Structure probing data (2A3 and DMS) for a 177-nucleotide construct. For DMS, 6,213 sequencing reads were counted. For 2A3 the reverse transcriptase was SuperScript II with manganese. DMS (dimethyl sulfate) methylates the pairing face of unpaired adenines and cytosines. Reactivities are given for positions 27 through 126.

[RMDB]
RNA sequence: GGGAACGACUCGAGUAGAGUCGAAAAAAAAAGAGCGUAAUCGCGUCAUUGAGUGACGUCAAGAUCAUCCAAGUGUGCUGUCUACAGUCGUAGAUAGCGCACAAUACGCUGAUGAUCAUUCAAAAAAGAUAACAGAGAAGUUCGCUUCUCUGUUAUCAAAAGAAACAACAACAACAAC
Reactivity to 2A3 in 0.01 (KOAc 150mM, MgCl2 10mM, bicine 150mM(pH8.5), 24C), signal-to-noise 6, nucleotides 027 to 126: a000a000a000a000a000g120a020g020c050g050u080a090a070u100c060g000c010g040u010c020a020u060u290g150a090g250u030g000a020c010g010u080c060a070a060g000a020u010c000a000u000c020c030a140a150g000u000g000u000g010c010u010g000u000c000u000a050c060a230g140u230c160g000u130a000g000a010u000a000g000c000g000c000a000c000a000a000u060a020c030g010c050u030g000a000u000g010a010u010c020a040u120u100c070a090a120a010a020a000a020
Reactivity to DMS in 0.01 (KOAc 150mM, MgCl2 10mM, bicine 150mM(pH8.5), 24C), signal-to-noise 5, nucleotides 027 to 126: a020a030a050a040a030g000a070g010c020g010u000a100a060u010c170g000c000g020u000c020a070u000u000g010a170g020u000g000a010c010g020u000c220a070a080g000a000u000c020a010u000c020c160a090a080g010u000g010u000g000c000u010g000u000c000u000a010c000a160g020u010c260g020u000a000g010a010u000a000g010c000g010c000a000c000a050a040u010a100c070g000c040u000g010a010u000g000a020u000c010a150u010u010c060a010a050a060a070a090a080